RNA sequence: GGGAACGACUCGAGUAGAGUCGAAAAGAUAUGGAUCUUGUGACGCUCAACAGCAGCUUCGGAAACGAAGCUGACAUGAGCGUGUCACUGAGAUCCUAAGUCAAACAACGUUGUUCGCAACGUUGAACAGUCUUUCAUCGUUCGCGAUGAAAGACUGAAAAGAAACAACAACAACAAC
Reactivity to 2A3 in 0.01 (KOAc 150mM, MgCl2 10mM, bicine 150mM(pH8.5), 24C), signal-to-noise 1, nucleotides 027 to 126: g070a000u090a030u200g000g010a000u010c010u000u010g000u010g000a000c000g000c010u000c030a080a120c030a240g090c000a000g000c020u000u000c010g070g020a080a060a080c010g010a010a000g000c000u010g000a010c010a060u090g000a000g010c000g040u020g010u020c000a030c110u120g040a020g000a020u030c000c000u010a170a010g060u070c050a100a000a150c010a000a000c000g000u000u010g060u070u060c260g000c190a020a010c040g000u010u000g020a050a040
Reactivity to DMS in 0.01 (KOAc 150mM, MgCl2 10mM, bicine 150mM(pH8.5), 24C), signal-to-noise 2, nucleotides 027 to 126: g010a070u000a300u010g010g000a000u000c000u000u000g000u000g010a040c000g010c000u000c020a030a090c300a230g000c020a010g010c000u000u010c000g000g000a130a060a230c000g040a030a000g000c000u000g010a020c070a220u000g000a000g020c010g010u000g000u000c000a000c020u010g000a010g000a000u000c000c000u000a010a000g020u010c080a150a090a300c010a000a010c000g010u000u000g000u000u050c240g030c010a010a010c010g010u010u000g000a070a210